An RNA of 177 nucleotides, treated with 2A3 and read out base by base. Conditions: 150 mM KOAc, 10 mM MgCl2 and 150 mM bicine (pH 8.5), 24 C. Reactivities are given for positions 27 through 126. Source: RMDB library RFM100, as collected in RNAgym.
[RMDB]
RNA sequence: GGGAACGACUCGAGUAGAGUCGAAAAAUUAGAGGGCUUGGGAAUGUAAUGUUCUUAACCUAUUCUCAAACUUUAAAUAUGUAAGACGUACUUGUUUCUUAAUUGAACUUGUACAUGAAUAAAAGUCCUAGGGAAACGGGUUCGCCCGUUUCCCUAGAAAAGAAACAACAACAACAAC
Reactivity to 2A3 in 0.01 (KOAc 150mM, MgCl2 10mM, bicine 150mM(pH8.5), 24C), signal-to-noise 1, nucleotides 027 to 126: a000u270u060a030g000a000g000g210g030c030u000u000g000g090g090a000a000u000g030u250a000a300u300g000u100u040c000u030u030a000a000c000c000u000a150u000u000c060u000c000a120a120a090c060u220u090u300a160a210a110u300a060u270g150u210a000a090g120a090c170g000u000a000c000u000u140g120u060u240u000c000u000u180a260a300u180u120g000a000a000c000u000u000g000u000a090c090a000u050g180a000a270u090a120a260a030a000g170u120c000